Structure probing data (2A3 and DMS) for a 177-nucleotide construct. For DMS the reverse transcriptase was MarathonRT. The data come from the RNA Mapping Database (RMDB), library RFMREP. Values are in units of 0.01, from 0 to 300, in steps of 10. The reactions ran in a buffer of 150 mM KOAc, 10 mM MgCl2 and 150 mM bicine (pH 8.5), at 24 C.
RNA sequence: GGGAACGACUCGAGUAGAGUCGAAAAGCUGGCUUUAGGAAAGGAUGUUCCGUGGCCGUAAAUGCAGGUUCACAGCGCUUCGUAUCGCGGCAAUAUCGCCAGUGGUGCUGUCGUGAUGCGGUCUUCGCAACAACCUAAGCUUCGGCUUAGGUUGUUGAAAAGAAACAACAACAACAAC
Reactivity to 2A3 in 0.01 (KOAc 150mM, MgCl2 10mM, bicine 150mM(pH8.5), 24C), signal-to-noise 1, nucleotides 027 to 126: g050c080u040g020g000c010u140u130u160a110g000g090a000a090a000g050g090a080u200g070u090u000c020c010g030u040g000g000c000c040g010u020a050a090a050u170g020c030a000g060g070u060u130c080a020c000a050g000c030g020c060u100u160c010g000u000a010u030c000g000c000g010g000c000a040a020u030a030u060c110g070c190c110a180g040u170g160g000u020g000c020u010g000u040c000g010u030g000a010u020g000c020g020g010u010c050u040u070c040g050
Reactivity to DMS in 0.01 (KOAc 150mM, MgCl2 10mM, bicine 150mM(pH8.5), 24C), signal-to-noise 2, nucleotides 027 to 126: g000c070u010g020g010c020u000u000u010a060g000g010a030a080a120g000g020a100u000g000u000u000c010c040g010u000g010g010c030c010g010u000a060a040a100u010g010c070a040g010g000u000u000c030a060c060a090g020c050g010c140u020u000c020g020u000a020u000c020g000c020g010g000c020a030a050u000a040u000c000g000c130c140a130g020u010g010g030u000g020c080u000g010u000c020g000u000g000a010u000g010c020g000g010u000c050u010u000c260g020